[RMDB]
RNA sequence: GGGAACGACUCGAGUAGAGUCGAAAAAUAAAUAGCGCACUAAAGACGCUGAUCUUUAGUUACCUAGGAACUUUAGUGCAGUGAUCCGAGUUCCUAGGUCCCAUGUCGGACCUUACUAAGAAAAAAAGGAUAAAGUAUACUUCGGUAUACUUUAUCCAAAAGAAACAACAACAACAAC
Reactivity to DMS in 0.01 (KOAc 150mM, MgCl2 10mM, bicine 150mM(pH8.5), 24C), signal-to-noise 2, nucleotides 027 to 126: a120u000a050a060a080u010a120g010c070g030c180a110c030u000a020a000a010g010a010c020g040c200u000g020a070u000c020u020u000u000a010g000u000u000a040c010c000u010a020g000g010a020a020c010u000u000u000a060g010u000g020c100a100g030u000g000a070u010c070c050g040a020g020u000u000c000c000u000a000g000g030u000c000c010c010a100u000g010u010c020g010g000a160c030c010u000u000a090c120u010a060a130g040a020a010a060a130a150a080a110
Reactivity to 2A3 in 0.01 (KOAc 150mM, MgCl2 10mM, bicine 150mM(pH8.5), 24C), signal-to-noise 2, nucleotides 027 to 126: a000u090a040a070a070u200a120g060c050g000c010a010c010u020a020a030a000g020a000c010g130c300u110g030a230u000c000u000u010u000a000g020u040u040a030c040c010u000a010g010g000a030a000c000u080u070u150a180g020u140g090c110a030g220u050g160a120u080c020c000g000a000g000u000u000c000c000u010a000g030g000u000c000c010c010a020u100g090u040c030g000g070a010c000c000u040u040a080c100u150a170a120g190a110a180a040a060a020a040a010
Structure probing data (DMS and 2A3) for a 177-nucleotide construct. For 2A3 the reverse transcriptase was SuperScript II with manganese. The RNA was probed in 150 mM KOAc, 10 mM MgCl2 and 150 mM bicine (pH 8.5) at 24 C.